[RMDB]
RNA sequence: GGGAACGACUCGAGUAGAGUCGAAAACGGGAAUAUGCAACCAGUUACAUUUGAGGCCAUUUGGGCUUAAGCGUAUUCCAUGGAAAGUUAUCGUCCCACAUUUCGGAAAUUAUAUUCCGAGCCAGCAUGUAAGCUAUCCUUUCGAGGAUAGCUUACAAAAAGAAACAACAACAACAAC
Reactivity to DMS in 0.01 (KOAc 150mM, MgCl2 10mM, bicine 150mM(pH8.5), 24C), signal-to-noise 4, nucleotides 027 to 126: c060g000g000g000a010a010u000a000u010g000c000a100a150c300c190a020g010u040u010a100c070a060u010u020u000g030a180g000g000c160c070a100u020u010u000g030g000g020c010u000u010a030a220g000c030g060u000a000u000u000c000c000a080u020g000g000a140a080a070g000u020u020a080u020c150g010u000c000c000c010a070c210a110u000u020u000c010g000g000a010a050a100u040u060a150u020a190u000u000c010c010g010a020g000c240c170a060g030c120a090
Reactivity to 2A3 in 0.01 (KOAc 150mM, MgCl2 10mM, bicine 150mM(pH8.5), 24C), signal-to-noise 5, nucleotides 027 to 126: c050g030g000g000a000a000u020a010u040g000c010a000a050c040c010a020g070u140u150a140c050a120u050u060u150g080a060g060g080c040c000a060u070u080u250g040g000g000c000u050u040a070a010g020c010g000u000a000u000u000c000c000a000u020g130g080a070a040a060g010u100u080a150u190c060g030u040c020c000c000a020c020a020u100u120u010c000g040g080a020a020a000u280u110a130u160a120u230u000c000c000g000a010g030c040c010a020g000c030a050
An RNA of 177 nucleotides, treated with DMS and 2A3 and read out base by base. DMS adducts were read by reverse transcription with MarathonRT. Reactivities are given for positions 27 through 126. The reactions ran in a buffer of 150 mM KOAc, 10 mM MgCl2 and 150 mM bicine (pH 8.5), at 24 C.